[RMDB]
RNA sequence: GGGAACGACUCGAGUAGAGUCGAAAAGCUCGGAGACGAGCAAGGCUGACAAAACCUUGUCCCAACCUCCACGUGGUGUCGGCUGGAUAAUGCUGCAUUAUGUUGCAUUUAUCAACUGGGAACUAAAACCAGUGCCAUGCUUCGGCAUGGCACUGGUAAAAGAAACAACAACAACAAC
Reactivity to 2A3 in 0.01 (KOAc 150mM, MgCl2 10mM, bicine 150mM(pH8.5), 24C), signal-to-noise 1, nucleotides 027 to 126: g000c000u000c000g100g050a020g030a080c000g000a000g000c000a000a000g000g090c050u050g020a090c060a050a080a000a020c000c000u010u110g020u000c000c020c040a000a090c050c000u000c000c030a070c080g030u080g050g040u010g020u040c010g000g050c000u040g040g060a000u000a000a000u000g000c020u000g000c070a070u040u120a190u300g100u000u120g010c000a030u000u000u130a060u000c000a000a030c020u020g040g000g040a020a120c030u070a150a050a050

About this RNA: Chemical mapping of a 177-nucleotide RNA with 2A3. The RNA was probed in 150 mM KOAc, 10 mM MgCl2 and 150 mM bicine (pH 8.5) at 24 C.